[RMDB]
This 177-nucleotide RNA was probed chemically with DMS and 2A3. Reactivities are given for positions 27 through 126. Values are in units of 0.01, from 0 to 300, in steps of 10.
RNA sequence: GGGAACGACUCGAGUAGAGUCGAAAAUCAACGGGCUCACCGAUGCCUGGGUGCAGGUAGAACACGGCCCCACCACACCGCCGUUCGCGCCCACUUGCAUGGUCGGCAACGAGUGCGAGCUGCUCGAACUGCUUCGAUUUUUCGAAAUCGAAGCAGUAAAAGAAACAACAACAACAAC
Reactivity to DMS in 0.01 (KOAc 150mM, MgCl2 10mM, bicine 150mM(pH8.5), 24C), signal-to-noise 1, nucleotides 027 to 126: u010c100a180a130c100g000g010g000c010u020c160a170c130c030g010a090u000g020c000c040u030g020g010g010u010g010c020a030g020g010u000a060g040a110a060c110a110c150g000g030c000c020c000c050a070c030c060a050c060a040c080c120g030c060c040g000u010u000c070g030c240g000c030c030c040a040c160u010u010g030c060a110u000g000g030u020c180g010g010c000a010a110c030g000a070g010u010g080c030g010a120g030c000u000g010c020u000c020g000a080
Reactivity to 2A3 in 0.01 (KOAc 150mM, MgCl2 10mM, bicine 150mM(pH8.5), 24C), signal-to-noise 1, nucleotides 027 to 126: u080c030a070a070c050g020g040g000c000u010c030a040c020c020g000a030u040g020c040c030u040g100g050g010u070g000c050a030g000g080u090a050g090a160a020c040a010c120g020g000c040c000c010c000a040c040c000a080c030a040c030c070g000c000c020g030u050u020c020g020c010g050c100c020c000a020c080u050u020g000c010a010u080g080g060u050c040g030g000c000a010a040c000g030a020g100u070g060c030g020a010g010c010u010g010c000u090c040g020a020